[RMDB]
RNA sequence: GGGAACGACUCGAGUAGAGUCGAAAAAGACCAUGGUACGCCAUGGUCAAAGACAUCAAGGCCCGCGUCAUAAACUUCCCAUAUGAUUUCCCAUAUGGGAGUUUAUGACUUAGGCUUCGUUGCCUAACCAUGGGCAAUCAUUCGUGAUUGCCCAUGGAAAAGAAACAACAACAACAAC
Reactivity to DMS in 0.01 (KOAc 150mM, MgCl2 10mM, bicine 150mM(pH8.5), 24C), signal-to-noise 2, nucleotides 027 to 126: a140g000a060c000c000a010u000g000g010u020a080c300g060c000c000a010u000g030g000u000c000a000a030a060g010a100c030a030u020c000a110a040g000g020c000c010c000g010c300g000u000c000a010u000a010a010a000c000u020u040c000c000c000a000u000a000u000g000a180u040u060u030c300c210c050a000u000a000u000g000g000g030a020g000u000u000u000a020u000g000a000c030u010u010a040g000g000c000u000u030c100g000u000u000g030c050c030u000a080a150
Reactivity to 2A3 in 0.01 (KOAc 150mM, MgCl2 10mM, bicine 150mM(pH8.5), 24C), signal-to-noise 4, nucleotides 027 to 126: a000g000a000c000c000a000u000g000g010u070a070c300g050c050c000a000u000g000g010u010c000a000a000a000g000a000c000a050u140c070a060a030g030g020c010c000c010g050c060g010u000c000a000u000a000a000a020c050u300u190c000c000c000a000u000a000u000g100a120u060u200u220c090c070c000a000u000a000u000g010g000g000a000g010u000u000u000a000u000g000a000c000u000u020a000g000g000c000u010u000c030g050u050u060g070c000c000u040a050a060